[RMDB]
RNA sequence: GGGAACGACUCGAGUAGAGUCGAAAAAUCCGUGCUAUUGGCGCUGGUGGUCAGUCCACACAGGUGCGGGUGGUGAUGCCAAUGAUCAAGCAGCUAGAGAAUGUUACGGCCACCGGAAGGACUCAGACAGUUUUAGUGGAUUCGUCCACUAAAACUGAAAAGAAACAACAACAACAAC
Reactivity to DMS in 0.01 (KOAc 150mM, MgCl2 10mM, bicine 150mM(pH8.5), 24C), signal-to-noise 4, nucleotides 027 to 126: a100u020c010c000g010u020g000c020u020a050u000u010g010g010c020g030c040u010g000g040u020g030g000u020c100a140g020u020c020c030a030c040a090c060a110g010g020u010g020c070g000g000g040u000g000g010u010g000a100u030g000c030c030a070a080u030g010a070u010c060a080a060g000c050a060g000c060u020a050g010a190g000a140a040u040g010u010u020a100c090g020g000c000c010a040c020c010g020g030a120a070g000g000a070c060u010c060a080g010a270
Reactivity to 2A3 in 0.01 (KOAc 150mM, MgCl2 10mM, bicine 150mM(pH8.5), 24C), signal-to-noise 7, nucleotides 027 to 126: a000u030c010c010g020u050g030c030u090a110u230u110g070g000c070g020c070u040g010g000u020g010g030u050c030a060g040u020c020c000a030c000a000c020a070g130g030u100g060c040g030g020g000u050g000g010u040g030a060u090g060c010c040a060a070u120g040a090u110c020a040a020g030c020a010g030c040u160a030g000a000g070a300a100u120g030u160u100a040c010g000g010c000c000a000c030c000g000g010a070a050g050g040a030c010u010c060a020g030a170